[RMDB]
RNA sequence: GGGAACGACUCGAGUAGAGUCGAAAAUGUCUACUACUGCCACUGCUAUUCAACAUUGUUCUGGAAAAUUCUAGGCAGAACAAGUAGGCAAGAGAAAAGAAGAGGUAUCCAGAUUGGAAAGGAAGAAAUAAAACUGUCUCUGUUUGACAGUUGUCAAGGUGGUCAUAAAUUUCGAUUUAUGACCACCAAAAGAAACAACAACAACAAC
Reactivity to 2A3 in 0.01 (KOAc 150mM, MgCl2 10mM, bicine 150mM(pH8.5), 24C), signal-to-noise 3, nucleotides 027 to 156: u030g000u000c000u010a000c010u030a030c010u030g020c040c010a150c110u090g040c040u120a060u150u150c040a100a080c050a110u070u190g050u110u130c070u080g040g030a020a100a070a090u220u040c100u100a100g000g020c000a000g010a100a040c040a010a060g010u020a010g000g000c020a030a030g030a010g000a010a110a010a000g010a020a000g030a000g000g030u020a000u010c010c010a030g070a180u080u080g030g030a020a070a030g040g010a030a030g040a040a070a020u130a030a040a010a010c030u010g020u020c000u030c010u060g160u090u090u100g010a000c010a020g010u040u000g010u060c030a070a110
Reactivity to DMS in 0.01 (KOAc 150mM, MgCl2 10mM, bicine 150mM(pH8.5), 24C), signal-to-noise 1, nucleotides 027 to 156: u000g040u000c010u000a000c010u000a120c010u000g030c010c010a060c130u000g030c020u010a190u010u000c020a100a160c020a110u000u010g060u010u010c040u010g050g000a090a050a120a110u000u020c040u010a120g030g020c000a000g010a070a070c030a070a040g020u000a000g010g000c040a060a120g000a190g020a000a070a040a120g000a030a110g020a110g000g030u000a040u000c010c030a020g000a170u010u010g000g010a090a050a090g010g010a060a020g000a110a020a080u010a030a040a040a000c000u000g000u000c010u000c060u010g000u000u010u010g010a020c000a010g010u000u000g010u000c100a060a210